[RMDB]
RNA sequence: GGGAACGACUCGAGUAGAGUCGAAAACGCUGGGUAUAUGCGUCAGACAUGAACCAACUGAAGCGCGCACGGUUGAGUUCAACAGCUGACGCCGCUAUACCUGUGCUGAAGCGCGCACGGCAACCGAAAGGUGCGAAAACUGGACUUCGGUCCAGAACUGGACCUCUUAGUUCGCUAAGAGGUCCAGAAAAGAAACAACAACAACAAC
Reactivity to 2A3 in 0.01 (KOAc 150mM, MgCl2 10mM, bicine 150mM(pH8.5), 24C), signal-to-noise 1, nucleotides 027 to 156: c040g050c000u010g010g000g010u010a010u000a000u160g040c010g000u010c000a010g020a140c090a190u080g000a000a000c010c000a000a000c010u000g010a230a030g040c030g000c010g000c000a000c000g010g020u020u000g050a160g130u030u000c030a130a160c120a150g000c000u000g000a000c000g000c000c000g000c000u000a000u000a000c000c000u010g050u070g000c010u130g060a120a010g010c030g020c000g020c000a000c000g070g000c030a060a110c030c020g020a050a080a040g000g020u030g000c000g060a040a120a050a030c000u010g000g000a010c000u050u070c220g090g000u000c000c000a000g010a040a000